Chemical mapping of a 177-nucleotide RNA with 2A3 and DMS. Source: RMDB library OK2TRN, as collected in RNAgym. The RNA was probed in 150 mM KOAc, 10 mM MgCl2 and 150 mM bicine (pH 8.5) at 24 C.
[RMDB]
RNA sequence: GGGAACGACUCGAGUAGAGUCGAAAAGGCUGAACCAACUCACCUGUUCAUACUGACUUGCUCAAUUUUCUGUUACCUCUAGUGGAGUGUGAAGGUAGGUUAUGGAGCUGGGGUUGGGGAGUGUCACUGAUAGAAAAUCGUUCGCGAUUUUCUAUCAAAAAGAAACAACAACAACAAC
Reactivity to 2A3 in 0.01 (KOAc 150mM, MgCl2 10mM, bicine 150mM(pH8.5), 24C), signal-to-noise 4, nucleotides 027 to 126: g020g000c020u020g020a020a020c010c010a010a010c010u030c040a160c020c060u040g010u050u030c010a020u060a150c030u050g020a010c000u010u040g030c010u030c130a110a230u120u070u150u040c050u030g160u090u080a100c020c040u070c040u110a100g120u090g210g020a050g010u110g020u030g070a010a030g010g010u040a000g000g000u040u030a040u090g070g000a020g000c020u030g010g010g020g000u020u020g020g010g010g000a030g030u140g010u000c030a010c130
Reactivity to DMS in 0.01 (KOAc 150mM, MgCl2 10mM, bicine 150mM(pH8.5), 24C), signal-to-noise 5, nucleotides 027 to 126: g010g010c050u000g020a300a190c040c050a020a050c030u010c070a130c160c020u000g010u010u000c020a030u000a300c100u000g010a050c020u000u000g020c040u010c050a140a060u000u000u000u010c080u000g010u010u000a060c100c060u000c070u000a080g010u000g020g020a050g020u010g020u000g000a070a070g000g010u000a030g000g010u000u000a050u010g000g010a060g020c040u000g000g000g010g010u000u000g010g020g000g000a130g010u000g010u000c050a100c120